[RMDB]
RNA sequence: GGGAACGACUCGAGUAGAGUCGAAAACAGCUGAUGAAUACAUGCAGAGAAGAUGUCGUUGGCCAUCGCGAGUCUCUCAACAUGGAACUCACAGUACAUGACAUCCUAAAAAGCGGUCUUAAGAUACGAACCACAAAUAUUUCGAUAUUUGUGGUUCAAAAGAAACAACAACAACAAC
Reactivity to DMS in 0.01 (KOAc 150mM, MgCl2 10mM, bicine 150mM(pH8.5), 24C), signal-to-noise 8, nucleotides 027 to 126: c090a120g010c020u000g010a100u000g010a030a050u000a200c030a020u000g020c190a180g010a040g000a050a080g010a030u000g010u000c020g030u000u000g030g010c080c080a040u000c060g010c030g000a110g010u000c020u000c010u000c020a090a170c070a020u000g000g000a110a100c130u000c010a020c010a040g000u000a080c130a120u010g010a080c100a090u000c010c020u000a050a070a050a090a090g000c100g000g010u000c040u000u000a090a080g000a130u010a070c200
Reactivity to 2A3 in 0.01 (KOAc 150mM, MgCl2 10mM, bicine 150mM(pH8.5), 24C), signal-to-noise 5, nucleotides 027 to 126: c010a020g030c000u050g010a300u010g020a160a020u080a060c000a010u040g020c030a010g010a000g030a210a040g020a020u140g100u300c020g030u110u120g090g000c080c030a090u130c030g010c000g020a010g010u010c010u000c000u010c060a020a050c020a030u030g000g030a020a020c000u000c010a020c000a010g020u070a050c010a090u070g040a030c000a060u060c020c030u130a110a090a050a030a020g110c080g030g000u020c060u130u120a100a060g020a090u060a110c130

Structure probing data (DMS and 2A3) for a 177-nucleotide construct. The reactions ran in a buffer of 150 mM KOAc, 10 mM MgCl2 and 150 mM bicine (pH 8.5), at 24 C. Source: RMDB library OK2TRN, as collected in RNAgym. For 2A3, 6,256 sequencing reads were counted. The DMS profile rests on 9,801 reads. For 2A3 the reverse transcriptase was SuperScript II with manganese.